[RMDB]
RNA sequence: GGGAACGACUCGAGUAGAGUCGAAAACAGAAGGUUCUGGACGAAGCUUGUCGCAAGAAUCUGGACGCGCUUGCGGAACUGCGCGACAUAGCGGUCCACUUCUACCACCGGAGUCCUGAGCUUGCGGUCCUGCAGGUACUUUCGAGUACCUGCAGGAAAAAGAAACAACAACAACAAC
Reactivity to 2A3 in 0.01 (KOAc 150mM, MgCl2 10mM, bicine 150mM(pH8.5), 24C), signal-to-noise 1, nucleotides 027 to 126: c130a020g030a040a040g030g070u210u060c080u120g070g010a010c020g300a300a020g040c010u040u020g010u020c010g000c010a050a050g030a080a110u090c060u120g000g060a010c030g110c010g010c190u160u300g040c020g030g040a140a110c070u130g020c020g000c010g080a010c000a000u240a010g000c050g010g010u000c000c020a030c000u040u000c000u010a040c010c010a020c000c030g040g000a000g030u070c000c090u130g040a030g050c000u010u070g080c050g020g000
Reactivity to DMS in 0.01 (KOAc 150mM, MgCl2 10mM, bicine 150mM(pH8.5), 24C), signal-to-noise 2, nucleotides 027 to 126: c200a040g030a060a040g000g000u000u050c250u020g010g000a040c030g040a140a140g020c040u010u000g020u000c020g040c040a100a160g030a100a060u000c120u000g000g010a130c070g000c040g010c150u010u000g000c010g000g000a150a160c060u000g000c180g020c000g000a020c110a010u020a010g060c010g010g000u000c000c010a040c040u000u010c000u000a130c030c010a190c060c010g000g000a060g000u010c010c140u030g000a180g010c030u000u040g020c080g000g000
The record gives the reactivity of an RNA of 177 nucleotides to 2A3 and DMS. Conditions: 150 mM KOAc, 10 mM MgCl2 and 150 mM bicine (pH 8.5), 24 C. For DMS the reverse transcriptase was MarathonRT. Source: RMDB library OK2TRN, as collected in RNAgym.